[RMDB]
RNA sequence: GGGAACGACUCGAGUAGAGUCGAAAAGGUGCUCUGAAUGGAGUGCUCUGCUGAGAUUAUAAAAUAGAAGGUAAGCUAUUAUCUCUUACAACAGGGCAGGGCUUGUUGGAAUAGGCGGUAAAGUCUAAAAACUACCUCACCUUCGGGUGAGGUAGAACCACACAAUUUACUUCGGUAAAUUGUGUGGAAAAGAAACAACAACAACAAC
Reactivity to 2A3 in 0.01 (KOAc 150mM, MgCl2 10mM, bicine 150mM(pH8.5), 24C), signal-to-noise 2, nucleotides 027 to 156: g030g020u020g000c000u020c020u060g220a100a130u300g040g010a050g020u030g000c000u010c010u050g000c020u040g010a020g000a030u050u070a070u260a180a120a070a040u130a060g050a090a020g120g140u160a080a010g020c000u000a000u100u010a030u050c020u010c010u070u130a070c050a140a000c020a100g080g010g040c000a000g000g000g000c010u000u000g020u000u000g030g020a110a150u020a040g010g010c050g000g010u110a130a040a020g000u010c040u050a000a060a060a000a060c000u000a000c000c000u000c000a000c000c000u020u030c170g100g000g000u000g000a000g000g000u000a000g000a000a000